[RMDB]
RNA sequence: GGGAACGACUCGAGUAGAGUCGAAAAAAGUUGCACCAGGUACGGAUACCAGACGUUGCCAAACAGGGUGACAUGAGGAUCACCCAUGUACUGUCCCUUGGCAGCGGUACCUGGUGCUGGUGAAAAAGUGCGACAGUAAAUUCGUUUACUGUCGCACAAAAGAAACAACAACAACAAC
Reactivity to 2A3 in 0.01 (KOAc 150mM, MgCl2 10mM, bicine 150mM(pH8.5), 24C), signal-to-noise 1, nucleotides 027 to 126: a000a000g300u120u050g000c000a000c000c000a000g030g000u000a000c000g000g140a120u040a240c020c020a010g020a100c000g030u010u000g000c000c000a000a110a000c030a030g000g020g000u010g010a000c020a060u300g190a130g100g070a130u060c000a040c000c000c000a000u020g000u010a020c070u130g040u020c030c000c020u030u000g010g020c010a000g000c050g050g020u000a000c020c020u000g000g000u000g000c010u020g000g020u160g010a020a090a000a070a030
Reactivity to DMS in 0.01 (KOAc 150mM, MgCl2 10mM, bicine 150mM(pH8.5), 24C), signal-to-noise 1, nucleotides 027 to 126: a080a110g000u020u010g000c000a010c000c010a020g020g010u000a000c000g020g010a120u000a060c180c110a060g020a180c010g030u000u000g000c000c000a020a010a020c090a000g000g000g000u000g030a010c040a120u000g010a070g020g020a200u000c080a040c010c000c000a050u000g010u000a030c160u000g000u000c000c000c000u020u000g020g000c000a000g000c000g000g030u000a000c000c000u010g000g010u000g000c000u010g000g010u010g000a090a060a020a060a140
About this RNA:
The record gives the reactivity of an RNA of 177 nucleotides to 2A3 and DMS. The DMS profile rests on 1,292 reads. The reactions ran in a buffer of 150 mM KOAc, 10 mM MgCl2 and 150 mM bicine (pH 8.5), at 24 C. Source: RMDB library M2PK90, as collected in RNAgym. DMS adducts were read by reverse transcription with MarathonRT. The 2A3 profile rests on 1,126 reads. 2A3 adducts were read by reverse transcription with SuperScript II with manganese.